[RMDB]
RNA sequence: GGGAACGACUCGAGUAGAGUCGAAAAUAACUCGUAUGCGUUGGCCGCCUAAAGAGAUUUAGGUAGCCCGUUGGCGUCCGUGGGGCCUACAACGCGGACGCCGACGCCAUCUACAGCAGGCUAGCCGAUCACUCUUGUUCAGGGGCGGCCGGCGAAACAUUUCCAUAACGUUCGCGUUAUGGAAAUGAAAAGAAACAACAACAACAAC
Reactivity to 2A3 in 0.01 (KOAc 150mM, MgCl2 10mM, bicine 150mM(pH8.5), 24C), signal-to-noise 2, nucleotides 027 to 156: u130a020a020c020u020c070g100u140a110u260g100c000g000u010u000g010g000c000c000g040c010c010u040a040a010a030g030a050g020a150u070u040u200a020g010g000u010a000g000c020c040c000g030u000u000g000g000c010g010u000c000c000g000u020g000g020g040g040c040c010u070a090c040a130a010c000g020c000g020g000a010c000g000c030c000g000a000c000g000c010c000a180u090c080u200a110c060a130g110c000a010g030g000c020u010a080g240c000c000g030a060u040c010a040c050u010c000u000u050g050u130u140c090a060g110g000g000g000c000g010g000c040c000g000g000c000g040a060a040a000
The data come from the RNA Mapping Database (RMDB), library RSTRND. This 207-nucleotide RNA was probed chemically with 2A3. The reactions ran in a buffer of 150 mM KOAc, 10 mM MgCl2 and 150 mM bicine (pH 8.5), at 24 C.